[RMDB]
RNA sequence: GGGAACGACUCGAGUAGAGUCGAAAACUCGUUCACGGUUAAGUCUGUCUCUGGCAGAGCAGACCGUCAGGAGGAAGAGGUCACCAUCUUCACGAAGCCAAAGCCAAAUUCCGCCUUGUCCUGUAAAGGCCUACUAGUAUUUCGAUACUAGUAGGCCAAAAGAAACAACAACAACAAC
Reactivity to 2A3 in 0.01 (KOAc 150mM, MgCl2 10mM, bicine 150mM(pH8.5), 24C), signal-to-noise 4, nucleotides 027 to 126: c010u000c000g100u140u100c040a020c070g030g010u030u100a110a030g030u020c010u000g060u030c010u010c050u250g110g000c020a030g000a020g010c030a010g030a010c000c000g020u040c040a190g030g040a040g030g030a010a040g030a020g000g030u050c010a020c060c010a090u020c020u060u060c030a020c100g110a030a010g000c000c010a070a020a000g000c000c010a070a120a070u070u020c000c000g010c010c000u020u030g060u060c000c010u030g080u100a060a080a060
Reactivity to DMS in 0.01 (KOAc 150mM, MgCl2 10mM, bicine 150mM(pH8.5), 24C), signal-to-noise 3, nucleotides 027 to 126: c020u000c030g020u010u010c080a030c030g030g010u010u010a060a270g000u000c020u000g000u040c020u030c070u080g020g000c010a070g000a050g000c090a170g000a060c010c040g010u000c050a090g020g000a070g010g020a050a060g020a090g000g030u010c000a030c090c020a070u010c040u010u010c020a140c070g020a090a080g010c000c010a040a080a160g000c010c000a060a090a090u040u020c040c020g000c000c020u000u000g020u000c000c000u000g010u030a050a080a070
Annotation:
This 177-nucleotide RNA was probed chemically with 2A3 and DMS. Values are in units of 0.01, from 0 to 300, in steps of 10.